[RMDB]
Chemical mapping of a 177-nucleotide RNA with DMS and 2A3. Values cover nucleotides 27 to 126. The 2A3 profile rests on 5,611 reads.
RNA sequence: GGGAACGACUCGAGUAGAGUCGAAAAGAUAUGGACGAUGACCCACUUUAGGUAUUUCGAAGAACUCGGAAACGAGGGAGAAAUACGGGUGCAUCGUCCUAAGUCAAAAUCCGGCUUCGGCCGGAAAUCCAACUAUCAUGUUCGCAUGAUAGUUGGAAAAAGAAACAACAACAACAAC
Reactivity to DMS in 0.01 (KOAc 150mM, MgCl2 10mM, bicine 150mM(pH8.5), 24C), signal-to-noise 4, nucleotides 027 to 126: g000a020u000a280u000g000g000a010c000g000a020u000g000a060c000c000c000a230c300u020u010u010a100g040g010u000a000u000u000u000c000g030a160a180g000a130a150c010u000c000g020g000a060a040a110c010g000a010g010g000g010a100g020a010a000a000u000a000c000g010g010g020u000g020c010a000u000c000g010u000c000c000u000a010a070g000u010c030a070a060a170a130u010c000c010g010g010c000u000u010c290g010g020c000c000g010g000a010a030a040
Reactivity to 2A3 in 0.01 (KOAc 150mM, MgCl2 10mM, bicine 150mM(pH8.5), 24C), signal-to-noise 3, nucleotides 027 to 126: g020a010u060a020u110g000g000a000c000g000a000u010g010a010c000c090c010a090c100u200u210u290a220g060g040u040a010u000u000u030c070g110a300a090g060a250a150c010u000c010g000g010a020a020a030c010g000a000g010g040g010a090g010a020a010a000u030a030c090g010g000g000u180g190c000a000u010c000g000u000c000c000u000a000a000g000u000c000a010a020a020a230u000c020c010g010g000c010u050u060c210g160g000c000c000g010g000a030a000a010